This 207-nucleotide RNA was probed chemically with DMS and 2A3. Source: RMDB library OK3TST, as collected in RNAgym. For DMS, 2,004 sequencing reads were counted. DMS adducts were read by reverse transcription with MarathonRT. For 2A3, 714 sequencing reads were counted.
RNA sequence: GGGAACGACUCGAGUAGAGUCGAAAAAACUACUUGGGCCAUAGAGUUGCGUGGUGUCUGCAUACUAGGGAAGAUAUACCUAGCGGAAUGGAGAUUGACCAUAUCAACGGCGACCCUUCUGACAACAGGAUUUGCAAUCUUCGGUUAGCUACUCCUAUCCCCUUUCCUAAUUCGUUAGGAAAGGGGAAAAAGAAACAACAACAACAAC
Reactivity to DMS in 0.01 (KOAc 150mM, MgCl2 10mM, bicine 150mM(pH8.5), 24C), signal-to-noise 1, nucleotides 027 to 156: a040a040c010u000a020c050u000u000g010g010g050c010c010a180u000a100g010a080g010u000u000g030c070g020u020g030g060u010g030u000c000u000g000c080a090u020a030c030u000a060g000g000g000a210a060g020a150u000a120u000a100c020c020u000a060g040c020g020g000a100a060u010g020g010a110g000a110u000u000g030a100c000c080a070u000a190u010c030a030a020c070g000g000c020g000a120c020c000c000u000u010c020u000g000a170c080a080a100c070a090g000g010a070u010u000u000g020c070a100a160u000c030u000u010c080g040g000u000u000a040g010c030u000a060c030u010c010c000u020a300
Reactivity to 2A3 in 0.01 (KOAc 150mM, MgCl2 10mM, bicine 150mM(pH8.5), 24C), signal-to-noise 2, nucleotides 027 to 156: a000a000c040u100a020c010u070u080g000g000g010c060c010a080u110a080g120a000g050u030u000g030c060g050u030g050g000u010g050u010c000u040g050c020a070u040a060c000u010a050g000g020g080a070a060g060a130u110a030u100a190c000c000u010a010g010c070g080g100a120a080u060g110g020a040g050a050u020u080g160a060c000c020a040u070a030u100c050a040a030c010g030g000c030g050a050c000c000c000u040u020c060u010g050a020c020a100a010c060a090g030g000a090u020u010u210g080c010a020a010u000c000u060u060c060g010g000u130u040a010g000c040u070a060c000u020c010c010u050a130